The record gives the reactivity of an RNA of 177 nucleotides to 2A3 and DMS.
2A3 is a SHAPE reagent: it acylates the 2'-hydroxyl of flexible nucleotides of all four kinds.
RNA sequence: GGGAACGACUCGAGUAGAGUCGAAAAAUCGGCGCCAUGACCAGCUGUCGCAGCCGUCAGCGAAAAUCACCAGGCGCGCCGCCAGGCACCGAUCGCCAGGCCCACAACCAGCAGCGCACCGGCCUGACCAGAGCGCCAAAUUCGUUUGGCGCUCUGGAAAAGAAACAACAACAACAAC
Reactivity to 2A3 in 0.01 (KOAc 150mM, MgCl2 10mM, bicine 150mM(pH8.5), 24C), signal-to-noise 2, nucleotides 027 to 126: a000u070c020g010g010c020g000c010c000a040u090g080a110c030c030a030g030c010u040g000u040c040g050c160a090g050c010c050g070u060c020a000g000c020g100a010a010a000a150u160c070a030c090c080a030g010g020c030g000c000g000c050c010g000c000c020a050g010g000c020a010c040c030g030a020u090c020g000c000c020a020g020g010c000c000c020a090c000a030a050c000c010a000g040c000a010g010c010g020c030a000c010c000g030g000c000c000u000g020a010
Reactivity to DMS in 0.01 (KOAc 150mM, MgCl2 10mM, bicine 150mM(pH8.5), 24C), signal-to-noise 1, nucleotides 027 to 126: a040u010c040g050g000c020g030c090c040a210u000g000a080c000c060a280g000c030u000g030u000c050g000c120a170g030c030c010g000u020c030a050g090c150g020a020a010a080a050u000c000a070c100c000a170g000g000c010g020c000g040c040c170g010c050c050a050g030g000c000a030c150c060g000a000u020c020g080c030c050a060g000g000c000c000c010a080c250a070a130c020c000a060g000c060a080g000c050g010c040a090c000c010g000g000c060c090u030g000a200
For DMS, 872 sequencing reads were counted. The 2A3 profile rests on 1,147 reads.